The record gives the reactivity of an RNA of 177 nucleotides to DMS.
In probing experiments dimethyl sulfate is read out at A N1 and C N3, which are open when not base-paired.
The RNA was probed in 150 mM KOAc, 10 mM MgCl2 and 150 mM bicine (pH 8.5) at 24 C.
DMS adducts were read by reverse transcription with MarathonRT.
RNA sequence: GGGAACGACUCGAGUAGAGUCGAAAAAUUACGGGCGGCGCAGGUGGAGCUGCGAUCCCUCCGCCCAUCGCGUGCUCUCUCGGUGGCCCAGACGCUGCAAACCGACAGGCGGGCCACCUGCAACGAAGUCUCUAAGAGAAUUCGUUCUCUUAGAGACAAAAGAAACAACAACAACAAC
Reactivity to DMS in 0.01 (KOAc 150mM, MgCl2 10mM, bicine 150mM(pH8.5), 24C), signal-to-noise 5, nucleotides 027 to 126: a080u010u010a110c160g000g000g010c020g010g000c130g010c100a040g010g020u000g000g010a110g010c030u000g010c010g000a090u000c030c020c020u010c010c000g010c000c010c010a080u010c060g010c050g000u010g010c020u010c080u000c090u000c090g010g020u000g010g010c010c010c010a130g030a090c110g000c000u000g000c050a080a110a120c180c150g010a130c040a030g010g000c050g010g010g000c000c010a010c000c000u000g010c060a100a060c090g010a080a120